[RMDB]
RNA sequence: GGGAACGACUCGAGUAGAGUCGAAAAAGAGGGUGGUAAAGGCAGUUCGAGGUCACCGUCGUUACACUCUCCAAAAUCAUGGAUAAGAAGCGCGUCUGCUACGGGGAUCCUUGGACUAAGACGUCCAGUCACUCACUCAGUUCGCUGAGUGAGUGACAAAAGAAACAACAACAACAAC
Reactivity to DMS in 0.01 (KOAc 150mM, MgCl2 10mM, bicine 150mM(pH8.5), 24C), signal-to-noise 1, nucleotides 027 to 126: a070g010a090g000g010g000u000g020g000u000a020a110a090g050g030c070a060g000u000u010c110g000a070g060g000u000c030a000c030c000g040u000c050g010u000u000a060c050a020c050u020c160u000c010c100a050a080a110a090u000c140a080u000g020g010a070u000a160a090g000a120a060g000c030g000c040g000u000c150u000g010c070u000a060c120g000g020g000g000a070u000c040c000u000u000g000g010a000c000u010a130a160g000a060c140g000u010c000c010a080
Reactivity to 2A3 in 0.01 (KOAc 150mM, MgCl2 10mM, bicine 150mM(pH8.5), 24C), signal-to-noise 1, nucleotides 027 to 126: a000g040a020g020g040g010u060g020g050u060a030a090a050g070g000c010a010g010u000u060c030g000a030g010g090u040c010a020c020c000g000u020c000g000u030u020a020c010a010c020u000c010u010c030c020a050a100a020a140u140c070a100u080g000g080a040u040a210a110g070a170a010g000c050g010c020g020u050c100u110g090c000u030a060c000g000g020g060g000a030u120c000c000u000u010g000g020a020c020u000a080a010g120a060c090g030u000c000c000a020